RNA sequence: GGGAACGACUCGAGUAGAGUCGAAAAGAUAUGGAUGUGCUAGGGAGCUGACUCGGAAACGAGCAGCGAGGAUCUAGUACAUCCUAAGUCAAAGUCACAUUAACACGUUCGCGUGUUAAUGUGACAACAUAGGAUAUUCCUUCGGGAAUAUCCUAUGAAAAGAAACAACAACAACAAC
Reactivity to 2A3 in 0.01 (KOAc 150mM, MgCl2 10mM, bicine 150mM(pH8.5), 24C), signal-to-noise 5, nucleotides 027 to 126: g040a020u060a050u190g000g010a000u010g000u000g010c000u010a010g020g000g010a010g030c000u040g200a300c010u000c010g030g000a060a080a050c010g000a000g000c010a000g000c010g020a090g000g000a000u000c000u000a000g000u000a000c000a000u000c000c000u000a020a000g020u000c060a260a010a020g000u010c000a010c000a010u000u010a010a000c000a010c030g050u080u090c300g020c010g170u000g000u020u000a010a000u000g000u000g010a000c000a000a000
Reactivity to DMS in 0.01 (KOAc 150mM, MgCl2 10mM, bicine 150mM(pH8.5), 24C), signal-to-noise 5, nucleotides 027 to 126: g000a040u010a300u000g000g000a010u000g010u000g010c000u000a010g000g010g000a030g020c010u000g000a160c010u000c000g000g000a110a100a170c000g010a020g000c000a010g010c000g000a040g020g000a030u010c010u000a010g000u000a000c020a010u000c000c000u000a010a090g000u010c030a090a110a140g000u010c000a010c000a000u000u000a000a000c000a010c000g010u000u010c210g020c000g010u000g000u010u000a000a000u000g010u000g010a010c000a030a070